[RMDB]
RNA sequence: GGGAACGACUCGAGUAGAGUCGAAAAACAGCAAUAGAUCGGAUGAUUUACUAAAGUCAUCGAUGCCGUCCGUUAGCAUAUCAAAGAUCUUAUUAUCGAUUGAUAGUGAAUGAAUCAGAUAGUGGUGACAGAACGUUAAGUUCGCUUAACGUUCUGUAAAAGAAACAACAACAACAAC
Reactivity to DMS in 0.01 (KOAc 150mM, MgCl2 10mM, bicine 150mM(pH8.5), 24C), signal-to-noise 6, nucleotides 027 to 126: a100c080a120g000c100a080a110u040a080g010a020u010c050g010g000a020u010g010a020u000u000u000a160c300u060a100a050a030g010u010c000a000u000c000g000a050u010g010c060c060g000u010c030c030g020u000u010a100g000c060a070u000a030u010c020a050a090a130g000a030u010c060u000u020a030u020u010a000u010c020g010a110u030u030g000a020u010a040g000u010g010a050a030u030g010a060a030u010c010a050g000a040u010a020g030u010g010g000u010g000
Reactivity to 2A3 in 0.01 (KOAc 150mM, MgCl2 10mM, bicine 150mM(pH8.5), 24C), signal-to-noise 8, nucleotides 027 to 126: a000c040a020g140c060a050a110u100a150g160a080u040c110g140g030a030u030g010a020u040u050u150a250c150u290a170a090a020g020u000c000a000u000c010g010a010u040g030c010c030g030u090c010c000g010u030u080a030g040c040a040u030a000u130c040a070a040a030g010a020u000c010u060u020a030u080u030a010u040c130g160a260u010u300g050a020u020a040g070u050g090a060a100u100g020a040a040u030c030a040g030a050u060a040g180u080g120g010u040g030
This 177-nucleotide RNA was probed chemically with DMS and 2A3. The reactions ran in a buffer of 150 mM KOAc, 10 mM MgCl2 and 150 mM bicine (pH 8.5), at 24 C. It was measured as part of the RMDB library OK1LIB. For DMS, 13,860 sequencing reads were counted.